[RMDB]
RNA sequence: GGGAACGACUCGAGUAGAGUCGAAAAGCUGAGUUAUGAUGGUUUGAUGCAUCAUAGUCUGAGUAGUGAUCCUCAGACACUCAGCACAGACAGUAUGUCUCUAUGGAUCACUACAUAGAGGCUUGUGCAUCAAACCACAAGCACAUACUGUAGCUGACCGAUAGCCAUGGUUCGCCAUGGCUAUCGGAAAAGAAACAACAACAACAAC
Reactivity to 2A3 in 0.01 (KOAc 150mM, MgCl2 10mM, bicine 150mM(pH8.5), 24C), signal-to-noise 1, nucleotides 027 to 156: g000c020u010g020a000g050u210u090a090u080g130a180u060g020g000u000u020u000g000a000u000g000c000a000u010c040a040u170a030g000u000c000u000g120a000g030u040a000g000u010g000a020u000c000c000u050c060a000g020a000c000a010c010u170c060a040g110c090a000c000a030g090a050c030a010g070u060a030u170g030u050c010u050c060u120a140u100g020g000a000u000c000a000c020u000a000c000a010u300a000g250a000g050g000c030u000u040g000u000g000c000a010u010c000a000a000a000c000c000a000c000a000a000g000c000a000c000a050u070a050c010u070g040u240a000g010c030u030g030a000